This 207-nucleotide RNA was probed chemically with DMS and 2A3. The reactions ran in a buffer of 150 mM KOAc, 10 mM MgCl2 and 150 mM bicine (pH 8.5), at 24 C. For DMS the reverse transcriptase was MarathonRT. For 2A3 the reverse transcriptase was SuperScript II with manganese.

RNA sequence: GGGAACGACUCGAGUAGAGUCGAAAAUCGCUCUAAUCCGGCGACAAAUGACGCAUUAUCGGUGAUAGCCGCCUGUCGAUUGUGCAAUGGAAUAUCUUCUUCUUCAACAAGCAAAACAGCAGCUCCAGAGUCAUAUGAUAAGCUAGGAUCGACGACCGUAACCUUAAGCAUUCGUGCUUAAGGUUACAAAAGAAACAACAACAACAAC
Reactivity to DMS in 0.01 (KOAc 150mM, MgCl2 10mM, bicine 150mM(pH8.5), 24C), signal-to-noise 2, nucleotides 027 to 156: u000c040g060c020u000c070u010a130a100u010c070c190g000g030c010g000a120c060a050a160a090u010g010a140c060g000c040a190u000u000a060u000c010g020g010u000g000a160u000a060g040c000c030g040c030c020u000g000u010c040g010a180u000u000g010u000g000c010a170a130u000g010g000a160a130u000a080u000c050u020u000c070u000u000c040u050u010c060a040a060c080a010a130g060c000a050a100a020a040c030a060g000c000a080g020c030u020c020c030a070g010a180g000u000c090a040u000a060u020g000a070u020a080a090g050c040u000a120g040g030a040u000c020g010a060c020g020a060c020c030
Reactivity to 2A3 in 0.01 (KOAc 150mM, MgCl2 10mM, bicine 150mM(pH8.5), 24C), signal-to-noise 6, nucleotides 027 to 156: u030c000g010c040u000c010u020a040a040u020c020c010g020g000c020g010a010c060a000a160a050u110g030a020c060g040c070a060u050u120a080u260c070g050g010u060g080a150u130a070g040c020c010g040c030c060u050g030u070c040g090a070u040u070g040u040g030c060a060a070u090g050g000a060a030u100a070u110c070u110u010c010u070u020c000u080u100c050a080a110c030a120a050g090c020a020a060a040a080c030a030g040c010a010g000c010u020c050c010a020g010a010g060u030c010a020u040a050u180g100a080u050a130a010g010c020u060a070g050g020a020u030c040g020a020c010g020a020c020c090